[RMDB]
RNA sequence: GGGAACGACUCGAGUAGAGUCGAAAAGAAAAGAACAGGAAACUGGAAAACUCUCUUUCUCGUCGAAGCUAUCGAAAAGGGCUCUCGAUUUGAUGAGGUAGAGAGAGAGAGGGAAACCUCUCGAAAAGGGAUUAGUAAUCUUCGGAUUACUAAUCCCAAAAGAAACAACAACAACAAC
Reactivity to DMS in 0.01 (KOAc 150mM, MgCl2 10mM, bicine 150mM(pH8.5), 24C), signal-to-noise 2, nucleotides 027 to 126: g010a130a040a060a140g010a210a180c000a030g010g000a100a120a150c050u000g000g000a080a120a030a110c000u000c010u000c000u000u000u020c010u000c000g010u010c000g010a030a050g000c130u020a070u040c080g010a040a100a060a060g000g010g020c020u000c140u000c000g020a060u000u030u000g020a070u000g020a020g030g000u030a000g000a030g000a000g000a000g030a020g000a040g020g000g000a050a130a270c000c000u000c000u010c000g010a030a000a060a020
Reactivity to 2A3 in 0.01 (KOAc 150mM, MgCl2 10mM, bicine 150mM(pH8.5), 24C), signal-to-noise 3, nucleotides 027 to 126: g040a010a160a000a010g070a070a000c040a070g020g170a070a070a020c030u050g070g040a080a060a130a120c000u010c000u000c000u000u060u090c000u000c010g000u000c010g020a030a050g040c030u070a090u300c060g110a060a120a050a160g060g040g000c010u000c000u000c020g050a060u040u030u160g090a090u080g000a000g030g050u040a000g010a000g000a000g000a000g000a000g000a000g000g010g020a020a010a040c000c000u010c000u010c010g020a000a020a060a030